[RMDB]
Chemical mapping of a 177-nucleotide RNA with DMS and 2A3.
The reactions ran in a buffer of 150 mM KOAc, 10 mM MgCl2 and 150 mM bicine (pH 8.5), at 24 C.
For 2A3, 5,842 sequencing reads were counted.
For DMS, 2,325 sequencing reads were counted.
It was measured as part of the RMDB library M2PK50.
High 2A3 reactivity points to a flexible backbone, as in loops and unpaired stretches.
Values cover nucleotides 27 to 126.
RNA sequence: GGGAACGACUCGAGUAGAGUCGAAAACCCUUUGUGUUCGCACAAAGGGAAAAGUCAGAAAGAUCAAAAAGAUCAGCGAUAAUACUGACAAAUAAACGCAAAAAACCUCCUCGUUCGCGAGGAGGAACAUGAUAGGAUGGUUCGCCAUCCUAUCAUGAAAAGAAACAACAACAACAAC
Reactivity to DMS in 0.01 (KOAc 150mM, MgCl2 10mM, bicine 150mM(pH8.5), 24C), signal-to-noise 3, nucleotides 027 to 126: c010c000c000u000u010u010g040u000g010u010u010c270g040c010a000c000a010a010a000g000g000g000a050a000a080a120g010u020c010a000g010a140a120a110g000a000u000c010a060a120a150a160a170g000a020u000c030a080g020c180g010a130u000a130a130u000a160c000u000g000a030c010a060a060a070u010a040a060a040c170g020c150a000a090a040a080a100a060c000c000u000c000c000u000c000g010u000u010c210g020c000g020a000g010g010a000g010g000a000a020
Reactivity to 2A3 in 0.01 (KOAc 150mM, MgCl2 10mM, bicine 150mM(pH8.5), 24C), signal-to-noise 4, nucleotides 027 to 126: c000c000c000u000u000u000g010u010g000u000u060c190g040c070a000c000a000a000a000g010g000g020a070a150a010a010g000u000c010a010g080a070a130a010g030a030u020c060a060a210a200a050a020g030a030u010c010a020g130c050g130a020u050a210a070u080a180c000u000g030a010c030a010a070a010u160a030a090a020c100g020c100a070a070a010a020a080a120c010c000u000c000c000u000c000g020u040u030c230g020c010g080a000g000g000a000g000g010a000a000